[RMDB]
RNA sequence: GGGAACGACUCGAGUAGAGUCGAAAAAUAACCAAUCAUUGAACCUGCUCUAUUUACAGUUAUUGGUACAUUGUGUUUAGCAAAUACACGCUUUAAACCGUCUUCAAGUAUAUCGCCUAACAUAUUAGCUCCCAUACAAUUUCGAUUGUAUGGGAGCAAAAGAAACAACAACAACAAC
Reactivity to 2A3 in 0.01 (KOAc 150mM, MgCl2 10mM, bicine 150mM(pH8.5), 24C), signal-to-noise 2, nucleotides 027 to 126: a000u060a010a050c020c000a010a040u040c060a040u030u050g050a030a040c010c030u040g010c020u060c020u100a190u090u110u070a050c010a020g020u030u100a060u080u080g010g000u040a040c040a100u090u080g020u010g020u120u060u080a000g010c020a010a090a090u100a060c050a020c040g000c040u020u050u060a030a020a000c020c020g050u040c020u100u090c060a020a000g050u020a060u000a000u140c000g050c000c030u040a060a030c050a050u160a160u140u100a030
Reactivity to DMS in 0.01 (KOAc 150mM, MgCl2 10mM, bicine 150mM(pH8.5), 24C), signal-to-noise 2, nucleotides 027 to 126: a140u010a180a100c030c020a060a070u010c120a030u000u000g010a130a200c070c030u000g010c040u000c090u000a100u000u000u000a100c080a060g010u000u020a110u000u000g000g000u000a060c190a090u010u000g000u000g010u000u020u000a120g000c060a010a080a050u000a050c040a060c080g000c070u000u000u000a020a090a130c250c030g000u000c050u000u000c060a020a080g010u000a050u000a080u000c100g000c050c040u000a030a030c050a040u000a070u030u000a130